Chemical mapping of a 207-nucleotide RNA with DMS and 2A3. 2A3 adducts were read by reverse transcription with SuperScript II with manganese. The reactions ran in a buffer of 150 mM KOAc, 10 mM MgCl2 and 150 mM bicine (pH 8.5), at 24 C. Values cover nucleotides 27 to 156. Source: RMDB library M2RFOK, as collected in RNAgym. For 2A3, 2,341 sequencing reads were counted.
RNA sequence: GGGAACGACUCGAGUAGAGUCGAAAAAGCACGGUUUUAGAGGACGCAUUUUGUCCGUGCGGUAAUGCCCUCCUUUACACUUUCUCGCAUGGUGCGGGAGUGUGGAGAGGAAACAAAAGCUAGUCUCGAUAGGCGGUUAACUUCGGUUAACCGCCAACAGUGGAGAGUAGUUCGCUACUCUCCACUGAAAAGAAACAACAACAACAAC
Reactivity to DMS in 0.01 (KOAc 150mM, MgCl2 10mM, bicine 150mM(pH8.5), 24C), signal-to-noise 1, nucleotides 027 to 156: a130g000c000a010c010g040g040u000u010u000u000a130g000a110g000g000a030c020g000c030a290u010u000u000u000g010u020c030c000g010u020g000c000g010g010u000a050a050u000g010c000c020c040u000c000c030u000u000u040a090c010a030c010u000u000u000c000u000c000g000c000a300u000g040g020u010g010c050g000g000g010a020g000u000g030u000g000g000a030g030a160g030g000a020a050a050c020a010a000a080a090g000c040u000a100g030u010c000u010c090g020a230u010a170g000g050c000g040g000u000u000a000a040c000u010u020c300g010g000u000u010a020a020c010c000g040c020c000a000a030
Reactivity to 2A3 in 0.01 (KOAc 150mM, MgCl2 10mM, bicine 150mM(pH8.5), 24C), signal-to-noise 4, nucleotides 027 to 156: a000g000c000a000c000g000g040u000u000u000u000a060g010a050g030g020a010c030g030c130a160u020u010u000u030g010u000c000c000g000u000g000c000g010g060u200a070a030u230g020c000c000c000u020c010c000u050u110u020a020c000a000c000u100u150u070c010u020c000g050c030a100u260g270g020u300g160c020g000g000g000a020g000u020g000u000g000g000a030g010a020g020g050a010a040a000c000a000a000a000a020g160c000u020a060g010u000c010u000c050g090a100u110a170g000g000c000g000g000u000u000a000a000c000u010u020c100g000g000u000u000a000a000c000c000g000c000c000a000a000